[RMDB]
RNA sequence: GGGAACGACUCGAGUAGAGUCGAAAAGUAUAGCAUGACUGGCGAUGCGUAUACGAUGAAUCAGCCAGCAAAGAAUCCGUUGUGCGAAAGCACUUCGGUAAUGCAUAAUCGGUUCGAGUACAGCCCGAUACGAGAACCGUUGUUAGUACGGGCCAGAAUUUAUCGAUCACUUCGGUGAUCGAUAAAUAAAAGAAACAACAACAACAAC
Reactivity to 2A3 in 0.01 (KOAc 150mM, MgCl2 10mM, bicine 150mM(pH8.5), 24C), signal-to-noise 1, nucleotides 027 to 156: g030u020a010u050a040g020c010a000u050g050a150c000u000g000g000c020g000a010u000g010c020g020u040a060u040a080c210g060a110u170g080a040a050u080c010a030g060c010c030a020g000c060a100a030a000g080a020a120u040c000c020g020u000u010g000u000g000c010g050a030a000a010g010c000a000c000u010u000c000g000g000u030a020a000u140g000c040a060u140a210a110u210c080g000g010u000u000c000g000a010g000u010a020c040a070g000c050c000c000g010a030u030a030c050g000a030g000a040a000c010c000g000u000u020g040u000u060a040g020u020a050c000g050g050g000c040c010a030g010a100
Reactivity to DMS in 0.01 (KOAc 150mM, MgCl2 10mM, bicine 150mM(pH8.5), 24C), signal-to-noise 3, nucleotides 027 to 156: g020u000a090u010a070g020c000a070u010g010a050c000u000g000g010c000g040a030u000g000c010g000u000a120u000a090c120g040a120u000g000a090a080u000c040a160g090c030c050a040g000c070a100a130a140g000a230a240u000c000c000g030u000u000g010u000g020c010g000a110a090a290g020c000a010c000u000u000c010g030g020u000a000a020u000g030c070a150u000a130a110u010c050g020g040u000u000c000g010a300g020u000a020c010a030g010c000c000c000g010a120u000a040c030g010a300g010a020a010c020c000g030u010u010g020u000u000a080g040u000a100c080g010g020g020c060c020a150g010a100
The data come from the RNA Mapping Database (RMDB), library OK3TST. An RNA of 207 nucleotides, treated with 2A3 and DMS and read out base by base. The 2A3 profile rests on 951 reads. The RNA was probed in 150 mM KOAc, 10 mM MgCl2 and 150 mM bicine (pH 8.5) at 24 C.